[RMDB]
RNA sequence: GGGAACGACUCGAGUAGAGUCGAAAAGGGUGGACGACGACGGUGUCGUCAUCGAUGCGGGCGCCAAGCAUCGGCGCGAUCUUCUUGUUGCGCAGCACUUCCUCAAGCACCGCGCGGUCCAGGCUCAGGACGUUAGGCACUUCGGUGCCUAACGUCCAAAAGAAACAACAACAACAAC
Reactivity to DMS in 0.01 (KOAc 150mM, MgCl2 10mM, bicine 150mM(pH8.5), 24C), signal-to-noise 1, nucleotides 027 to 126: g000g010g010u000g050g010a120c030g030a020c000g000a120c090g080g020u000g020u000c020g000u000c030a060u000c040g000a010u000g010c000g020g000g040c110g030c070c060a090a130g000c080a060u000c040g020g000c070g000c000g000a030u000c100u010u020c180u000u000g000u000u010g000c030g030c030a130g030c080a110c040u000u000c040c050u000c100a060a120g000c030a060c070c040g000c060g030c010g000g000u000c000c030a090g020g000c030u000c050a140
The record gives the reactivity of an RNA of 177 nucleotides to DMS. The DMS profile rests on 891 reads. The reactions ran in a buffer of 150 mM KOAc, 10 mM MgCl2 and 150 mM bicine (pH 8.5), at 24 C. The data come from the RNA Mapping Database (RMDB), library OK2TRN. DMS adducts were read by reverse transcription with MarathonRT.